[RMDB]
RNA sequence: GGGAACGACUCGAGUAGAGUCGAAAACGGGCUCAGCAAAUUCUGCAAAUGCCACCCAUUGUGCAGAUCAAAAAAGAUGUGGAGCGGGUGAUAGCCAAGGAUACGGCGCUGAAGGACUUCGCCAACAAGGCUAUGACUCGUUCGCGAGUCAUAGCCUAAAAGAAACAACAACAACAAC
Reactivity to 2A3 in 0.01 (KOAc 150mM, MgCl2 10mM, bicine 150mM(pH8.5), 24C), signal-to-noise 1, nucleotides 027 to 126: c000g000g000g000c000u000c000a110g000c040a100a000a170u200u000c050u050g000c020a010a010a010u040g060c030c040a090c000c040c000a000u000u090g110u140g020c000a000g020a090u100c110a000a070a000a020a000a080g120a050u190g090u150g000g000a020g000c030g000g100g030u040g070a070u030a000g040c080c000a080a000g180g000a010u020a270c010g000g000c000g000c040u000g160a200a070g030g000a010c010u050u000c020g010c010c000a020a020c000a300
This 177-nucleotide RNA was probed chemically with 2A3.
For 2A3 the reverse transcriptase was SuperScript II with manganese.
The reactions ran in a buffer of 150 mM KOAc, 10 mM MgCl2 and 150 mM bicine (pH 8.5), at 24 C.